[RMDB]
An RNA of 177 nucleotides, treated with DMS and 2A3 and read out base by base. The data come from the RNA Mapping Database (RMDB), library TTRDEL.
RNA sequence: GGGAACGACUCGAGUAGAGUCGAAAAGAUAUGGAACUGUUGAGCGAAGGCUAAGCUACUCGGAAACGAGUAGAACGCGCUUCGCAAUGAUGCAGUUCCUAAGUCAAAAGGUGCGUUCGCGCACCAACUCAAUACGUACCUUCGGGUACGUAUUGAGAAAAGAAACAACAACAACAAC
Reactivity to DMS in 0.01 (KOAc 150mM, MgCl2 10mM, bicine 150mM(pH8.5), 24C), signal-to-noise 4, nucleotides 027 to 126: g000a050u000a300u000g000g000a010a020c010u000g000u000u010g000a150g000c000g010a010a010g000g010c000u010a200a150g000c000u000a000c000u000c000g000g000a140a080a150c020g000a020g010u000a000g010a020a070c190g010c030g030c010u000u020c000g010c010a120a050u010g010a100u000g020c000a010g020u000u000c000c000u010a020a140g000u000c020a080a070a130a110g000g000u000g000c000g020u000u010c230g020c040g020c010a020c000c010a040a040
Reactivity to 2A3 in 0.01 (KOAc 150mM, MgCl2 10mM, bicine 150mM(pH8.5), 24C), signal-to-noise 3, nucleotides 027 to 126: g020a010u090a030u150g010g000a000a000c000u010g010u040u050g020a010g020c010g000a000a000g020g010c010u030a050a060g080c000u000a010c010u010c020g010g030a070a050a050c020g000a000g000u000a000g000a010a000c040g010c020g020c020u000u000c000g000c000a000a040u050g010a020u050g000c010a000g000u000u000c000c000u000a020a030g040u010c040a010a000a070a230g000g000u010g010c000g030u030u120c280g000c000g000c110a010c010c000a000a010
Conditions: 150 mM KOAc, 10 mM MgCl2 and 150 mM bicine (pH 8.5), 24 C. For DMS the reverse transcriptase was MarathonRT.